[RMDB]
Conditions: 150 mM KOAc, 10 mM MgCl2 and 150 mM bicine (pH 8.5), 24 C.
Chemical mapping of a 177-nucleotide RNA with 2A3 and DMS.
RNA sequence: GGGAACGACUCGAGUAGAGUCGAAAAGCCGAAGAGUUCGCUCUUCGGCGACGAAUUUGGCGUAGAUGAGACUCUACAGUACUAGCCAUCCCAGAUGUACAAAUAAGCAUUGCUUCGGCAAUGCUAAUCUCUGUAAUAGGUUCGCCUAUUACAGAGAAAAAGAAACAACAACAACAAC
Reactivity to 2A3 in 0.01 (KOAc 150mM, MgCl2 10mM, bicine 150mM(pH8.5), 24C), signal-to-noise 6, nucleotides 027 to 126: g010c010c000g000a010a000g020a000g050u120u150c200g020c130u000c000u010u000c010g000g090c010g000a000c020g080a070a180u160u120u190g110g020c050g010u050a020g020a140u110g110a040g020a110c040u010c000u010a010c010a030g010u020a020c060u040a000g010c000c000a030u020c010c000c000a040g040a180u200g010u060a050c030a050a100a080u210a220a020g000c000a000u000u000g010c010u020u080c160g070g000c000a000a000u000g000c000u010a000a010
Reactivity to DMS in 0.01 (KOAc 150mM, MgCl2 10mM, bicine 150mM(pH8.5), 24C), signal-to-noise 5, nucleotides 027 to 126: g010c000c000g030a000a010g000a030g020u000u010c220g020c000u000c010u000u000c010g010g000c000g000a030c070g000a130a130u000u010u010g010g000c020g010u000a060g010a060u000g010a280g010a060c100u000c000u000a010c000a040g050u000a080c180u000a120g000c010c000a110u010c000c000c010a120g000a050u010g020u000a060c130a070a080a100u010a090a040g000c000a010u000u000g000c000u000u010c210g020g000c000a010a010u000g010c000u000a020a040
Reactivities are given for positions 27 through 126. DMS adducts were read by reverse transcription with MarathonRT. The 2A3 profile rests on 9,041 reads.